Record summary:
Chemical mapping of a 177-nucleotide RNA with DMS and 2A3. It was measured as part of the RMDB libraries RFM100 and RFMREP. Reactivities are given for positions 27 through 126.
[RMDB]
RNA sequence: GGGAACGACUCGAGUAGAGUCGAAAACCCCCGGCUGGGCGCUGCAUCCAUGUAUUGAGCACAUCGGGCGAAAGUCCCCGGGCGACGGGGCAGAGAGUGCCAGCCCGCAAGGGCAGGACCCCCGCGCGAUACUAUGUAGAUUCGUCUACAUAGUAUCAAAAGAAACAACAACAACAAC
Reactivity to DMS in 0.01 (KOAc 150mM, MgCl2 10mM, bicine 150mM(pH8.5), 24C), signal-to-noise 9, nucleotides 027 to 126: c030c010c000c040c040g000g000c080u010g000g010g010c040g010c080u020g000c040a080u020c040c040a050u010g010u000a110u020u030g020a170g010c100a050c050a050u010c100g010g000g000c040g020a080a100a150g000u010c040c010c000c040g010g000g010c070g010a110c020g010g000g000g010c160a110g000a110g000a120g000u030g010c000c010a040g020c010c000c000g010c250a100a110g010g010g020c010a030g000g000a090c030c000c000c010c010g010c060g010c080
Reactivity to 2A3 in 0.01 (KOAc 150mM, MgCl2 10mM, bicine 150mM(pH8.5), 24C), signal-to-noise 9, nucleotides 027 to 126: c010c000c000c000c000g020g000c050u090g030g020g010c030g000c040u090g010c010a080u040c020c010a020u040g050u050a120u120u280g100a060g050c060a010c010a070u070c070g010g020g000c030g050a130a040a010g070u080c010c000c000c000g030g020g000c010g040a140c020g000g000g020g000c090a050g070a010g010a020g180u240g110c000c010a010g000c000c000c000g000c020a030a120g010g000g000c010a030g010g020a040c000c000c000c000c010g010c000g000c010